An RNA of 177 nucleotides, treated with DMS and read out base by base. Reactivities are given for positions 27 through 126. The data come from the RNA Mapping Database (RMDB), library TTRDES.
RNA sequence: GGGAACGACUCGAGUAGAGUCGAAAAGAUAUGGAAUGUGAGAAGCCGAUAAGCUGUGGAUCGGAAACGAUCCCAGCUUUUGACGGCUUCUCACAUUCCUAAGUCAAACAACGCGUUCGCGCGUUGAGCUAAAACACUUCUUCGGAAGUGUUUUAGCAAAAGAAACAACAACAACAAC
Reactivity to DMS in 0.01 (KOAc 150mM, MgCl2 10mM, bicine 150mM(pH8.5), 24C), signal-to-noise 2, nucleotides 027 to 126: g000a070u010a300u000g000g010a020a000u010g020u010g000a010g010a010a020g020c000c010g050a150u000a020a020g000c010u000g020u020g030g010a010u010c010g020g000a060a100a240c000g000a020u010c000c010c000a010g020c000u000u000u000u000g000a210c120g020g000c010u010u000c000u000c020a000c000a020u000u010c000c000u000a000a070g000u000c040a160a130a300c010a000a010c010g010c000g010u010u010c300g010c020g010c000g000u000u000g000a140